Record summary
Structure probing data (2A3 and DMS) for a 177-nucleotide construct. The DMS profile rests on 5,656 reads. It was measured as part of the RMDB library TTRDEL.
[RMDB]
RNA sequence: GGGAACGACUCGAGUAGAGUCGAAAAAAAAAGAUAUGGAUCCGUAACUCGCUUGGAUUUAUGGGUAAAACUCGGAAACGAGGAGUACGCCCAUUGUCAGCGAGGAGAAGGAUCCUAAGUCAAAAAACAUAUUAUGUAAGUUCGCUUACAUAAUAUGAAAAGAAACAACAACAACAAC
Reactivity to 2A3 in 0.01 (KOAc 150mM, MgCl2 10mM, bicine 150mM(pH8.5), 24C), signal-to-noise 2, nucleotides 027 to 126: a020a000a010a000a050g080a040u110a050u100g010g000a000u020c000c000g000u000a030a010c000u000c010g040c050u090u200g120g000a080u300u300u170a020u050g000g010g040u090a040a050a030a030c010u000c010g040g030a090a060a050c020g030a020g050g020a000g110u020a020c100g010c000c000c000a000u000u010g000u010c000a000g000c010g010a000g020g000a000g010a000a000g010g000a000u000c000c010u010a020a010g000u020c020a050a000a100a080a000a000
Reactivity to DMS in 0.01 (KOAc 150mM, MgCl2 10mM, bicine 150mM(pH8.5), 24C), signal-to-noise 5, nucleotides 027 to 126: a050a070a090a100a060g000a020u000a300u000g010g000a000u000c000c010g010u000a120a200c000u010c000g030c010u000u010g030g000a010u010u000u010a010u000g000g000g000u010a030a080a090a090c010u000c000g010g000a090a080a170c010g000a000g000g010a070g020u000a080c280g000c010c000c000a000u000u000g000u000c010a030g010c010g000a010g000g020a040g000a110a170g000g000a010u000c000c010u000a010a070g010u030c010a000a040a080a080a080a100